Structure probing data (2A3 and DMS) for a 177-nucleotide construct. Source: RMDB library TTRDEL, as collected in RNAgym. For 2A3 the reverse transcriptase was SuperScript II with manganese. Reactivities are given for positions 27 through 126. Conditions: 150 mM KOAc, 10 mM MgCl2 and 150 mM bicine (pH 8.5), 24 C.
RNA sequence: GGGAACGACUCGAGUAGAGUCGAAAAGAUAUGGAACUGUCUGGCUCGUUCGCAGAUAUCGGAAACGAUGUAGAACGAGAACUACCAGGUCAGUUCCUAAGUCAAAAGACCUCCUUCGGGAGGUCAACUGCAUUAAUAUCUUCGGAUAUUAAUGCAGAAAAGAAACAACAACAACAAC
Reactivity to 2A3 in 0.01 (KOAc 150mM, MgCl2 10mM, bicine 150mM(pH8.5), 24C), signal-to-noise 4, nucleotides 027 to 126: g010a000u060a030u150g000g000a010a000c010u010g000u010c010u000g060g000c010u010c010g000u010u010c020g020c100a050g070a300u300a040u160c010g010g000a050a040a050c010g000a010u030g040u160a110g000a010a000c010g000a010g000a000a010c020u080a020c020c010a000g020g090u230c010a010g000u000u000c000c000u000a010a010g010u000c010a000a000a040a170g010a010c000c000u000c000c020u040u070c160g140g000g000a000g000g000u010c000a000a000
Reactivity to DMS in 0.01 (KOAc 150mM, MgCl2 10mM, bicine 150mM(pH8.5), 24C), signal-to-noise 9, nucleotides 027 to 126: g000a040u000a300u010g000g000a010a010c000u000g010u000c000u000g000g000c010u000c000g010u000u000c000g020c230a150g010a070u010a020u010c000g010g000a110a110a160c010g010a010u000g000u000a110g010a010a010c010g000a010g010a050a020c090u010a300c080c000a000g010g000u010c000a010g010u000u000c000c000u000a020a060g000u010c040a100a060a120a120g010a010c000c000u000c000c000u000u010c190g020g000g020a010g010g010u000c000a000a060